[RMDB]
RNA sequence: GGGAACGACUCGAGUAGAGUCGAAAAGAUAUGGACAACAAUGAUGUAAAUCUUAUGUGGAUCGGAAACGAUCCCAUAUAUAAGUCGUUGAGUUGUCCUAAGUCAAAUCCGGUGUUCGCACCGGAAAGCUAUUAUUUACGUUCGCGUAAAUAAUAGCAAAAGAAACAACAACAACAAC
Reactivity to 2A3 in 0.01 (KOAc 150mM, MgCl2 10mM, bicine 150mM(pH8.5), 24C), signal-to-noise 9, nucleotides 027 to 126: g020a000u030a020u090g000g000a000c000a010a000c000a020a060u090g030a020u110g120u300a160a200a170u130c080u060u040a020u010g200u300g000g000a010u000c010g000g000a010a030a020c000g000a000u000c000c010c000a000u040a000u000a000u010a090a130g060u040c030g030u030u060g150a200g160u020u010g000u000c000c000u010a040a000g010u020c020a020a020a170u000c000c010g000g000u020g010u030u110c300g020c110a000c000c000g000g010a050a000a010
Reactivity to DMS in 0.01 (KOAc 150mM, MgCl2 10mM, bicine 150mM(pH8.5), 24C), signal-to-noise 7, nucleotides 027 to 126: g000a040u000a220u000g010g010a010c000a010a020c000a030a070u010g010a030u000g010u010a060a190a100u010c130u000u000a000u000g010u010g020g000a010u000c000g010g010a060a040a100c000g010a000u000c000c000c010a010u000a020u010a070u000a090a190g010u000c170g030u000u000g000a190g010u000u000g010u000c000c000u000a020a100g000u000c020a080a090a130u000c000c000g000g020u000g000u000u010c210g010c010a020c000c000g000g010a010a020a060
Chemical mapping of a 177-nucleotide RNA with 2A3 and DMS.
The 2A3 profile rests on 33,892 reads.
Source: RMDB library TTRDEL, as collected in RNAgym.
The RNA was probed in 150 mM KOAc, 10 mM MgCl2 and 150 mM bicine (pH 8.5) at 24 C.